[RMDB]
RNA sequence: GGGAACGACUCGAGUAGAGUCGAAAAUAUGAGGCCUGUGAGCUUCCUAUCCAGCAGUGGUGAAGGCCUUGCCCUGGGUGGCAAGAUACUUGCUCUAUGGUCACAGCACAGCCACGGGAAGCUGUGCGACCUCAGGUGAGCAAUUCACUGUCCAGUAUCACCCUGCUACUUUCGAGUAGCAGGGUGAAAAAGAAACAACAACAACAAC
Reactivity to 2A3 in 0.01 (KOAc 150mM, MgCl2 10mM, bicine 150mM(pH8.5), 24C), signal-to-noise 1, nucleotides 027 to 156: u270a130u110g040a010g000g000c040c040u270g070u080g300a020g000c000u080u030c000c000u160a170u190c030c020a020g100c000a120g080u000g080g030u150g080a110a100g090g000c000c000u000u000g000c000c000c000u190g190g050g060u120g060g000c070a000a010g030a000u050a040c050u000u000g000c030u000c000u010a080u080g000g000u010c030a010c080a090g000c010a000c000a000g000c030c000a050c020g060g060g030a210a000g060c000u000g000u000g000c010g000a000c000c000u120c060a040g000g210u020g060a030g000c070a050a010u110u040c010a000c050u010g050u040c010c140a000g000u050a040
The record gives the reactivity of an RNA of 207 nucleotides to 2A3. Reactivities are given for positions 27 through 156. The data come from the RNA Mapping Database (RMDB), library OK3TST. For 2A3 the reverse transcriptase was SuperScript II with manganese.